[RMDB]
RNA sequence: GGGAACGACUCGAGUAGAGUCGAAAAGAUCACCUGUUCGCAGGUGAUCAAUCUCCCACUUGAUCGAAGUCUCACAGCCUCGUUGCCCACGAGGCUCGGGCGUAUUGAUCCGCUUCGGCGGAUCAAAGGUACUACCACUGUUCGCAGUGGUAGUACCAAAAGAAACAACAACAACAAC
Reactivity to DMS in 0.01 (KOAc 150mM, MgCl2 10mM, bicine 150mM(pH8.5), 24C), signal-to-noise 3, nucleotides 027 to 126: g010a010u000c000a020c000c000u000g010u000u000c220g040c010a010g000g010u000g020a000u000c000a020a080u010c180u020c020c000c010a150c190u000u000g000a060u000c080g010a060a110g010u000c020u000c050a200c260a050g000c000c000u000c000g010u000u010g000c080c120c090a240c030g010a020g010g010c000u000c050g010g000g010c070g000u000a070u000u000g000a000u000c000c020g020c010u010u020c210g010g000c010g000g020a000u000c000a000a010a070
Reactivity to 2A3 in 0.01 (KOAc 150mM, MgCl2 10mM, bicine 150mM(pH8.5), 24C), signal-to-noise 2, nucleotides 027 to 126: g000a000u000c000a010c000c000u010g030u060u060c270g030c090a010g000g020u000g010a000u000c000a000a000u020c010u010c020c000c000a060c010u120u230g130a140u100c120g130a170a020g060u050c010u010c030a110c020a040g030c010c000u040c000g010u080u200g110c040c020c000a010c000g000a020g010g030c000u000c000g010g000g000c000g010u020a070u010u080g000a000u000c000c000g010c000u060u120c250g140g000c010g000g020a000u000c000a000a000a010
Source: RMDB library M2PK50, as collected in RNAgym. The record gives the reactivity of an RNA of 177 nucleotides to DMS and 2A3. For 2A3 the reverse transcriptase was SuperScript II with manganese. The RNA was probed in 150 mM KOAc, 10 mM MgCl2 and 150 mM bicine (pH 8.5) at 24 C.